[RMDB]
Chemical mapping of a 207-nucleotide RNA with 2A3. 2A3 is a SHAPE reagent: it acylates the 2'-hydroxyl of flexible nucleotides of all four kinds. For 2A3, 426 sequencing reads were counted. 2A3 adducts were read by reverse transcription with SuperScript II with manganese. Conditions: 150 mM KOAc, 10 mM MgCl2 and 150 mM bicine (pH 8.5), 24 C. It was measured as part of the RMDB library OK3TST.
RNA sequence: GGGAACGACUCGAGUAGAGUCGAAAAAGAGGGUGUCCAAAAUGAGGCCGACCCCCACGCCGAAAAGGCUGUUGAGAACAACUCGGCGGGUAGCCGAAUUGACUUCUCCUAAAAUCCUAAACACUUCAUCGAUGCUCCAGGGACGGGGGGCUACAACCAGGUGAACAGAGUUCGCUCUGUUCACCUGAAAAGAAACAACAACAACAAC
Reactivity to 2A3 in 0.01 (KOAc 150mM, MgCl2 10mM, bicine 150mM(pH8.5), 24C), signal-to-noise 1, nucleotides 027 to 156: a000g120a020g000g000g000u000g010u030c060c000a000a030a090a260u140g040a200g000g020c020c000g050a040c010c010c010c010c010a000c150g000c020c000g070a080a060a040a060g050g000c100u080g030u110u170g010a020g000a020a020c020a000a000c000u010c020g010g000c040g060g010g090u230a020g000c000c000g000a000a010u000u000g020a030c020u010u000c020u060c030c030u120a250a050a000a030u120c000c040u080a080a150a010c070a080c050u190u270c060a120u140c060g130a060u120g070c010u000c020c000a030g000g090g000a070c030g050g010g000g020g010g000c000u040a000c000a010a030c050